Structure probing data (2A3 and DMS) for a 177-nucleotide construct. Source: RMDB library VIROID, as collected in RNAgym. Reactivities are given for positions 27 through 126. Conditions: 150 mM KOAc, 10 mM MgCl2 and 150 mM bicine (pH 8.5), 24 C.
RNA sequence: GGGAACGACUCGAGUAGAGUCGAAAAGGCAUCGCACCUCCAUCCGGUGUCCAAGCAAUGGCGCAGACCUCAGGCUCCGACCGCUUAUUUCGGACCAUGUGUUUCGGGGGAAGGCAUGGCUACAUAACGAUUAACCCUAGUUCGCUAGGGUUAAUCGAAAAGAAACAACAACAACAAC
Reactivity to 2A3 in 0.01 (KOAc 150mM, MgCl2 10mM, bicine 150mM(pH8.5), 24C), signal-to-noise 1, nucleotides 027 to 126: g070g030c000a030u010c020g010c060a060c000c010u060c000c000a030u010c030c010g000g000u100g000u000c000c000a040a030g000c020a080a180u140g050g000c020g040c060a000g050a130c000c020u090c070a060g020g000c010u010c030c010g030a100c000c030g030c060u160u090a070u130u160u100c100g000g010a080c030c010a060u100g160u020g060u070u040u120c060g000g000g000g000g040a000a050g090g060c020a000u000g020g000c020u050a010c060a170u230a160a050
Reactivity to DMS in 0.01 (KOAc 150mM, MgCl2 10mM, bicine 150mM(pH8.5), 24C), signal-to-noise 1, nucleotides 027 to 126: g000g010c010a000u010c070g010c060a070c030c000u020c030c070a120u000c070c050g080g000u010g000u000c010c080a030a110g030c200a060a120u000g010g010c010g040c030a040g000a080c080c060u020c060a060g040g010c110u000c000c030g000a040c240c070g010c120u060u000a130u000u010u000c080g000g000a080c000c020a030u010g000u000g030u000u000u000c150g070g010g000g060g010a120a040g030g020c010a030u000g000g000c050u000a020c090a020u010a130a120
High DMS reactivity at an A or C suggests that its Watson-Crick edge is free. DMS adducts were read by reverse transcription with MarathonRT.